[RMDB]
RNA sequence: GGGAACGACUCGAGUAGAGUCGAAAAUUCGUUUUCUUCUAAUUGAAACGCAUUGACUUCGGCGGGCAACAGCAUUUUACGCUCAAAAACCCACGCCAGCACAAACAGCAAGAUGGCCGACAGCGCGAAGCAUCCUUAACUUCGGUUAAGGAUGCUUAAAAGAAACAACAACAACAAC
Reactivity to 2A3 in 0.01 (KOAc 150mM, MgCl2 10mM, bicine 150mM(pH8.5), 24C), signal-to-noise 5, nucleotides 027 to 126: u030u010c010g020u010u030u030u030c040u130u070c100u050a150a180u120u150g060a050a020a020c030g010c010a020u020u090g080a080c030u040u030c030g030g010c020g000g030g000c010a070a050c020a090g040c010a050u090u080u070u170a120c110g030c010u020c040a060a070a030a040a050c010c020c010a030c030g010c000c020a010g020c030a010c010a040a100a020c010a010g070c010a030a090g090a130u100g030g020c000c000g020a020c040a030g040c020g010c030g050
Reactivity to DMS in 0.01 (KOAc 150mM, MgCl2 10mM, bicine 150mM(pH8.5), 24C), signal-to-noise 6, nucleotides 027 to 126: u010u030c030g000u010u010u000u000c040u010u020c210u010a110a100u040u030g010a040a030a080c020g000c100a040u000u000g000a120c070u000u000c070g010g000c040g010g000g020c080a050a110c130a070g000c040a100u010u010u030u020a070c140g020c050u000c080a040a050a040a080a080c060c020c010a060c140g000c030c030a070g000c030a060c070a040a090a110c130a080g000c060a050a070g020a070u030g000g020c000c020g000a060c060a080g010c060g010c060g000
An RNA of 177 nucleotides, treated with 2A3 and DMS and read out base by base. The reactions ran in a buffer of 150 mM KOAc, 10 mM MgCl2 and 150 mM bicine (pH 8.5), at 24 C. Values cover nucleotides 27 to 126.